[RMDB]
Source information:
Chemical mapping of a 177-nucleotide RNA with DMS and 2A3. The reactions ran in a buffer of 150 mM KOAc, 10 mM MgCl2 and 150 mM bicine (pH 8.5), at 24 C. DMS adducts were read by reverse transcription with MarathonRT.

RNA sequence: GGGAACGACUCGAGUAGAGUCGAAAAACGUGCUAAGCGGGGAGGUAGCGGUGCCCUGUACUCGCAAUCCGCUAUAGCGGGGCCGAAUUCCCACUCGAGGUGGGACGACUUUAUGGUCUGACUUAAGUUCAAAUGAUCAGUUCGCUGAUCAUUUGAAAAAAGAAACAACAACAACAAC
Reactivity to DMS in 0.01 (KOAc 150mM, MgCl2 10mM, bicine 150mM(pH8.5), 24C), signal-to-noise 6, nucleotides 027 to 126: a080c090g010u030g000c030u000a110a080g010c010g010g000g000g020a180g010g010u000a070g010c040g010g010u000g000c060c070c070u040g010u010a040c030u030c050g010c050a140a160u030c010c000g000c000u000a120u010a040g000c000g000g000g000g010c030c010g000a070a120u000u010c010c000c010a020c030u010c140g010a090g020g030u000g020g000g000a050c180g010a030c060u000u010u040a070u030g000g000u010c000u000g010a220c060u010u010a070a080g000
Reactivity to 2A3 in 0.01 (KOAc 150mM, MgCl2 10mM, bicine 150mM(pH8.5), 24C), signal-to-noise 6, nucleotides 027 to 126: a000c020g090u110g010c000u060a050a010g000c010g000g020g020g010a050g060g030u090a010g020c000g060g010u070g030c040c020c040u090g080u100a050c030u020c060g030c020a020a090u050c000c010g000c020u080a060u080a210g020c000g000g000g000g000c000c020g010a020a070u120u020c000c010c000a000c010u060c080g160a090g190g000u020g010g010g000a010c010g020a020c010u080u070u110a150u300g020g000u000c010u010g020a070c020u100u080a080a110g020